[RMDB]
RNA sequence: GGGAACGACUCGAGUAGAGUCGAAAACGGCAAAAAAGCAAACUUGACCACCAAGGAUAAAAGAGUUCUUAUCCAAGGAUGCAAAAGAUAAUCUCACUUUUGACACCCACUGAUCUCGAACUUAAAGAAAACCGAGACUACUUCGGUAGUCUCGGAACGCUGAGUACAUGUUCGCAUGUACUCAGCGAAAAGAAACAACAACAACAAC
Reactivity to 2A3 in 0.01 (KOAc 150mM, MgCl2 10mM, bicine 150mM(pH8.5), 24C), signal-to-noise 2, nucleotides 027 to 156: c030g010g000c060a000a000a020a040a060a060g060c030a150a170a100c090u060u050g050a130c020c010a000c010c010a030a010g050g000a030u060a060a060a010a030g090a000g020u060u000c000u020u030a000u000c000c020a040a060g020g020a050u050g010c020a000a010a050a060g040a070u180a130a150u170c030u030c090a060c020u000u020u020u030g110a110c000a040c040c000c010a070c050u080g040a110u050c080u060c110g020a050a050c020u090u090a160a080a080g150a020a050a050a030c000c000g000a000g000a000c000u000a000c000u030u050c140g080g000u020a010g000u000c000u010c000g000g000a000a000

Source information
This 207-nucleotide RNA was probed chemically with 2A3. Conditions: 150 mM KOAc, 10 mM MgCl2 and 150 mM bicine (pH 8.5), 24 C. Reactivities are given for positions 27 through 156.